Notes:
Conditions: 150 mM KOAc, 10 mM MgCl2 and 150 mM bicine (pH 8.5), 24 C. Chemical mapping of a 177-nucleotide RNA with 2A3 and DMS. Source: RMDB libraries RFM100 and RFMREP, as collected in RNAgym. As a SHAPE reagent, 2A3 marks flexible, mostly unpaired nucleotides at the ribose 2'-OH. For 2A3 the reverse transcriptase was SuperScript II with manganese.
[RMDB]
RNA sequence: GGGAACGACUCGAGUAGAGUCGAAAAGUGUAGUUAAACUCGGUGCGUUGUAGUAAUACAGGGUGCUAAGCGAGUGGAUAAAGUAACCUUGAAAAAGGUGCGAGCAAUCAUGCAGACCGUAACAUAACUUAAUAAUUUUUUUCGAAAAAUUAUUAAGAAAAGAAACAACAACAACAAC
Reactivity to 2A3 in 0.01 (KOAc 150mM, MgCl2 10mM, bicine 150mM(pH8.5), 24C), signal-to-noise 2, nucleotides 027 to 126: g020u040g050u050a090g010u070u140a050a060a030c020u020c030g060g000u020g040c300g040u010u010g030u070a050g030u070a090a090u030a110c010a020g000g020g060u030g020c010u040a090a010g120c030g000a000g050u060g000g000a060u090a070a080a000g020u030a080a130c010c000u000u050g050a000a070a000a000a000g010g000u020g000c030g000a020g010c030a010a150u210c010a080u150g010c000a000g040a080c000c030g030u030a060a030c030a160u170a050a030
Reactivity to DMS in 0.01 (KOAc 150mM, MgCl2 10mM, bicine 150mM(pH8.5), 24C), signal-to-noise 3, nucleotides 027 to 126: g010u010g000u000a060g000u030u000a070a080a030c010u000c000g010g020u010g010c040g020u030u010g000u000a010g000u050a090a130u020a030c050a040g000g000g060u000g010c010u020a060a100g010c070g000a070g010u020g000g020a130u000a060a110a150g010u030a060a040c000c000u000u000g000a070a060a070a020a010g010g010u010g010c040g000a080g020c060a050a060u010c080a060u000g010c030a030g010a180c030c030g000u000a060a110c050a070u010a080a140